[RMDB]
RNA sequence: GGGAACGACUCGAGUAGAGUCGAAAAUGGCUUCCCCCGAUGAUACGGGGUACUGGACCCUGGCACCACGUUGAGGUGGCCGGCAUCGCCAGGGAGAAGCGGCGAAAAGAGGCGACCCCAAGAAGGCGCCAGCACGCUUUUUCGAAAGCGUGCUGGCAAAAGAAACAACAACAACAAC
Reactivity to 2A3 in 0.01 (KOAc 150mM, MgCl2 10mM, bicine 150mM(pH8.5), 24C), signal-to-noise 1, nucleotides 027 to 126: u190g110g000c000u000u000c000c130c000c030c000g040a170u210g040a030u160a070c040g030g010g000g000u050a080c050u080g090g130a150c000c000c000u000g000g000c000a000c020c000a000c050g150u180u110g170a100g000g000u000g000g000c030c000g120g020c010a000u090c050g000c000c000a040g010g000g000a060g040a010a000g000c000g000g070c090g100a200a000a000a000g170a070g080g000c010g010a160c020c000c000c000a000a090g040a070a000g100g000c000